[RMDB]
RNA sequence: GGGAACGACUCGAGUAGAGUCGAAAAUGGGGAGAGGCUCUCGGACAGUCGGGGUUGCUGCGGGCCCGAGCCGGGUAGGGUCGCGCUCAGAGCUGUGCGCCCUGCCUGCGCCCUCCUCCCGGCUUAGGCCGUAUAAGGAAUUCGUUCCUUAUACGGCAAAAGAAACAACAACAACAAC
Reactivity to DMS in 0.01 (KOAc 150mM, MgCl2 10mM, bicine 150mM(pH8.5), 24C), signal-to-noise 9, nucleotides 027 to 126: u020g010g000g010g000a050g010a100g010g010c040u010c030u010c050g010g000a100c090a050g000u010c030g020g000g010g020u010u010g010c030u000g000c060g000g000g000c010c020c020g000a050g010c300c030g000g010g010u000a030g010g010g010u020c050g020c010g010c010u010c090a100g000a140g010c160u010g010u010g010c030g000c010c000c010u000g000c050c020u000g010c170g010c020c030c020u000c030c030u000c000c010c000g000g000c020u000u010a060g000
Reactivity to 2A3 in 0.01 (KOAc 150mM, MgCl2 10mM, bicine 150mM(pH8.5), 24C), signal-to-noise 8, nucleotides 027 to 126: u160g010g000g010g010a080g030a070g030g010c020u010c030u030c050g040g040a040c030a030g040u100c040g030g010g020g020u230u170g060c030u050g020c040g030g000g000c000c010c010g000a010g000c030c020g000g000g000u020a010g020g000g060u300c070g000c000g000c020u040c050a140g020a040g120c120u060g030u040g040c010g000c000c000c000u000g000c000c010u010g000c030g000c010c000c000u010c000c000u030c000c000c000g040g000c000u040u070a060g030
Conditions: 150 mM KOAc, 10 mM MgCl2 and 150 mM bicine (pH 8.5), 24 C. An RNA of 177 nucleotides, treated with DMS and 2A3 and read out base by base. In probing experiments dimethyl sulfate is read out at A N1 and C N3, which are open when not base-paired. It was measured as part of the RMDB libraries RFM100 and RFMREP.